[RMDB]
RNA sequence: GGGAACGACUCGAGUAGAGUCGAAAAGGAGUGUUCGCACUCCAAUAGAGCGUACUACUCCUUUUGACGGCUAUGCUAACUACCCACCCUUUCCCAAAUAGGAAAGGAGGUUAGGAAGCCGAUAAGGAGUAUCGCAAUAAAGUGACUUCGGUCACAAUCUAUAACGUAACUUCGGUUACGUUAUAGAAAAAGAAACAACAACAACAAC
Reactivity to 2A3 in 0.01 (KOAc 150mM, MgCl2 10mM, bicine 150mM(pH8.5), 24C), signal-to-noise 6, nucleotides 027 to 156: g010g000a010g010u030g030u120u180c200g100c070a000c010u020c000c000a020a000u060a020g110a010g020c020g010u070a070c040u000a010c000u030c000c040u000u050u040u070g260a150c010g000g000c010u040a020u300g100c000u000a040a020c010u110a100c040c040c020a070c020c020c010u010u010u040c030c020c030a260a300a200u270a110g000g000a000a000a000g000g000a010g000g000u000u000a000g000g060a030a020g000c000c000g020a040u040a050a000g020g000a000g010u010a000u060c000g000c010a010a030u150a080a070a010g010u030g010a000c010u040u120c300g100g000u010c010a000c000a010a020
Reactivity to DMS in 0.01 (KOAc 150mM, MgCl2 10mM, bicine 150mM(pH8.5), 24C), signal-to-noise 3, nucleotides 027 to 156: g010g030a070g050u000g020u010u000c170g050c030a030c010u000c010c010a080a080u000a130g010a220g010c000g020u000a040c120u010a020c010u000c000c000u010u000u000u010g000a180c070g000g020c000u000a080u000g030c030u000a000a060c010u000a050c010c020c050a300c190c010c000u020u000u000c000c000c010a050a180a240u010a030g000g020a030a030a030g020g010a070g020g000u000u000a030g020g010a180a160g030c010c010g060a050u000a010a020g000g010a040g000u000a030u000c020g040c000a090a130u000a080a070a140g020u000g000a040c010u010u000c270g040g000u000c000a030c010a060a170